[RMDB]
RNA sequence: GGGAACGACUCGAGUAGAGUCGAAAAUUUGAGUGAUGAGGUUGGACUCGGCAAGACGAUUGAGGUCGGGCUGACGCUCUCACGAUUAAUCCAGACCGGCGAUGUUGAGACUGCACUCUUACUUGUUCCAGCCAGUCUUAUGGAACAGUGGCAGCGCCAGUAUACCUUUGUUCGCAAAGGUAUACUGAAAAGAAACAACAACAACAAC
Reactivity to 2A3 in 0.01 (KOAc 150mM, MgCl2 10mM, bicine 150mM(pH8.5), 24C), signal-to-noise 5, nucleotides 027 to 156: u090u040u080g030a020g000u010g030a120u140g010a030g030g040u100u030g040g020a240c000u010c000g000g000c010a050a100g140a140c170g140a180u110u300g100a100g100g040u010c000g000g010g000c000u010g000a000c010g090c200u010c000u000c000a000c010g000a000u000u160a050a020u030c020c000a020g100a120c030c030g050g000c070g080a090u080g020u060u060g010a040g030a090c010u020g000c020a060c080u080c040u100u110a090c010u080u180g000u030u000c010c010a030g050c050c010a050g100u060c040u130u140a090u060g000g010a000a010c000a020g010u030g070g000c020a010g000c020g000c030
Reactivity to DMS in 0.01 (KOAc 150mM, MgCl2 10mM, bicine 150mM(pH8.5), 24C), signal-to-noise 3, nucleotides 027 to 156: u010u000u000g010a300g030u000g020a020u010g010a030g030g020u000u000g030g010a170c020u010c020g030g040c020a120a130g010a200c060g020a230u010u020g010a120g050g000u000c020g010g030g000c010u010g000a060c010g030c020u000c040u000c030a040c030g000a180u000u000a040a100u010c040c040a100g010a180c030c020g020g000c040g010a120u000g010u000u000g000a120g000a290c060u000g020c060a080c060u010c050u000u000a090c040u000u010g010u010u000c010c010a060g040c100c040a140g010u010c060u010u000a070u000g010g010a040a060c020a070g030u000g010g030c050a020g000c030g020c040
Notes: The data come from the RNA Mapping Database (RMDB), library OK3TST. The record gives the reactivity of an RNA of 207 nucleotides to 2A3 and DMS. For DMS the reverse transcriptase was MarathonRT. Reactivities are given for positions 27 through 156.